[RMDB]
RNA sequence: GGGAACGACUCGAGUAGAGUCGAAAAACAGAUUCGUCUGUAUCGCCUCCUAAGUCCAUGGGAGAAGAGCACACUGGAGCUCGUUCGGAAACGAACGAGCGUUGAAAGUGUGAACUUCGAAGAACAUGGAUAUGGAUCUUUAUGACUUCGGUCAUAACGAAUGGACUAAUUUCGAUUAGUCCAUUCGAAAAGAAACAACAACAACAAC
Reactivity to DMS in 0.01 (KOAc 150mM, MgCl2 10mM, bicine 150mM(pH8.5), 24C), signal-to-noise 2, nucleotides 027 to 156: a070c070a050g020a080u000u000c300g000u010c040u000g050u000a110u000c100g010c110c030u000c000c010u000a050a220g060u010c010c000a010u000g000g000g000a300g000a030a010g000a110g020c000a020c000a030c000u000g000g020a240g000c000u000c000g120u000u020c020g030g010a220a090a190c020g030a090a000c010g020a000g030c020g010u000u010g020a170a130a060g020u000g010u000g020a020a030c020u000u000c000g010a160a140g010a060a170c030a050u020g030g050a040u000a100u000g010g010a100u000c070u010u000u000a020u000g010a040c000u000u010c300g080g060u000c010a010u010a030a170
Reactivity to 2A3 in 0.01 (KOAc 150mM, MgCl2 10mM, bicine 150mM(pH8.5), 24C), signal-to-noise 5, nucleotides 027 to 156: a010c020a010g030a040u120u180c180g090u010c110u020g030u030a100u140c100g200c040c010u030c000c010u040a100a050g020u000c000c000a000u010g010g000g030a050g010a010a000g020a010g040c000a000c000a000c000u010g000g020a010g010c010u000c000g010u000u000c010g030g040a090a090a090c010g000a000a000c000g000a000g000c000g010u070u010g010a010a010a000g000u000g000u010g010a010a020c010u010u010c000g110a180a040g010a040a020c000a000u020g020g000a000u010a020u040g010g020a020u060c090u040u060u040a000u010g000a000c000u040u040c300g090g010u020c030a000u040a010a030